[RMDB]
RNA sequence: GGGAACGACUCGAGUAGAGUCGAAAAGCAUGUUUAUGUGAACCUAAGUAUGAAUCUCAGUGACUGUAGAUUAGAAGCACUGAUUAUAGCAUAGGCUGCUUGGUGUUCACUUUAUUUGCAUCUGUGAGUUUCCAACAAGCCCUAAGUUUACUGACAAGGUAUGGUCCAUAUUCGUAUGGACCAUACCAAAAGAAACAACAACAACAAC
Reactivity to 2A3 in 0.01 (KOAc 150mM, MgCl2 10mM, bicine 150mM(pH8.5), 24C), signal-to-noise 2, nucleotides 027 to 156: g020c000a000u060g000u010u080u010a140u180g010u010g000a000a000c000c000u000a010a020g000u010a050u260g140a150a130u050c010u000c030a030g040u010g110a300c050u090g060u200a080g100a300u190u160a130g070a170a000g000c010a010c010u000g050a020u080u130a140u130a040g050c090a130u080a140g060g000c000u000g020c000u030u010g010g010u110g000u050u000c010a000c000u020u040u010a060u010u030u050g000c020a050u040c070u020g030u020g070a050g040u020u030u030c050c020a050a040c040a030a050g030c020c000c030u110a120a060g010u020u070u100a170c020u010g050a020c030a090a070
Reactivity to DMS in 0.01 (KOAc 150mM, MgCl2 10mM, bicine 150mM(pH8.5), 24C), signal-to-noise 1, nucleotides 027 to 156: g030c010a070u000g000u000u000u030a040u000g020u020g000a050a080c060c000u000a050a060g000u000a090u000g000a090a150u120c170u000c020a000g020u060g000a250c050u000g020u000a100g040a250u000u010a140g020a120a120g050c050a030c020u030g010a100u000u000a080u000a120g020c060a170u000a080g020g010c010u000g000c060u000u000g000g000u020g000u000u000c010a130c020u000u000u000a020u000u000u020g000c030a090u000c040u000g000u000g000a130g010u010u000u000c040c020a020a100c080a070a160g000c040c000c000u000a100a190g000u000u000u000a120c060u000g010a100c040a070a190